[RMDB]
RNA sequence: GGGAACGACUCGAGUAGAGUCGAAAAACGAGUCCGUACGCGGACUCGAAGGACCCCAGAAGACCAAGGGGCCCAAACCUACCACUCAUUAGAUGCAUGGAAAUCACUAGGUGAUACGUCACCUAGAACACGCUUUUAAGCUUCGGCUUAAAAGCAAGCUCAACAACUACUUCGGUAGUUGUUGAGCAAAAGAAACAACAACAACAAC
Reactivity to 2A3 in 0.01 (KOAc 150mM, MgCl2 10mM, bicine 150mM(pH8.5), 24C), signal-to-noise 1, nucleotides 027 to 156: a000c010g010a010g000u050c000c000g020u020a030c180g030c060g050g000a000c000u000c000g010a010a010g000g000a010c020c020c000c000a050g160a290a010g050a160c100c070a100a040g010g000g000g020c000c000c000a030a030a030c050c010u040a080c060c000a070c100u080c010a080u020u160a050g010a300u170g050c070a070u000g070g130a060a050a050u180c050a060c080u000a000g000g000u000g010a020u000a110c260g080u030c000a000c000c000u000a000g000a020a000c000a000c060g000c000u000u010u010u000a010a000g000c010u030u120c210g030g010c000u010u020a010a000a000a020g000c000a000a000
An RNA of 207 nucleotides, treated with 2A3 and read out base by base. For 2A3 the reverse transcriptase was SuperScript II with manganese. Source: RMDB library M2RFPK, as collected in RNAgym. Conditions: 150 mM KOAc, 10 mM MgCl2 and 150 mM bicine (pH 8.5), 24 C.